The record gives the reactivity of an RNA of 177 nucleotides to DMS and 2A3. 2A3 is a SHAPE reagent: it acylates the 2'-hydroxyl of flexible nucleotides of all four kinds. DMS adducts were read by reverse transcription with MarathonRT. Values are in units of 0.01, from 0 to 300, in steps of 10. For 2A3, 447 sequencing reads were counted. For 2A3 the reverse transcriptase was SuperScript II with manganese. The reactions ran in a buffer of 150 mM KOAc, 10 mM MgCl2 and 150 mM bicine (pH 8.5), at 24 C.
RNA sequence: GGGAACGACUCGAGUAGAGUCGAAAAGGGCGGUUCCAGCUGGGUCAGCCAGUGCUCCGGAAUGUAUUGAAUCUGAUCCGGCGGCACAUUCCAUCCGAGGAACUGUAAGUCUCCGUUGCCAGAGCUCUCGGGCCAUUUAUUUCGAUAAAUGGCCCGAAAAAGAAACAACAACAACAAC
Reactivity to DMS in 0.01 (KOAc 150mM, MgCl2 10mM, bicine 150mM(pH8.5), 24C), signal-to-noise 1, nucleotides 027 to 126: g040g000g000c010g070g000u000u000c000c010a200g000c030u000g000g000g000u020c130a010g000c220c070a050g000u000g020c000u010c020c030g000g000a030a010u020g020u030a250u010u000g020a090a130u040c090u020g030a160u000c070c010g000g000c300g000g050c010a000c000a130u000u000c130c100a110u050c000c010g010a300g000g010a030a000c000u000g000u000a050a140g000u000c030u000c010c130g000u000u000g040c030c050a040g000a000g020c030u060c020
Reactivity to 2A3 in 0.01 (KOAc 150mM, MgCl2 10mM, bicine 150mM(pH8.5), 24C), signal-to-noise 1, nucleotides 027 to 126: g110g000g010c010g000g000u010u000c000c000a000g030c040u200g010g010g020u170c040a040g120c120c000a050g010u070g080c000u000c060c000g030g070a030a060u030g040u150a100u190u230g080a150a110u070c010u030g050a120u010c000c000g020g000c070g000g000c030a000c000a020u100u030c010c000a000u050c010c000g140a120g020g020a000a000c020u060g040u220a000a010g000u030c030u010c090c010g020u000u070g030c010c000a020g000a020g030c000u020c000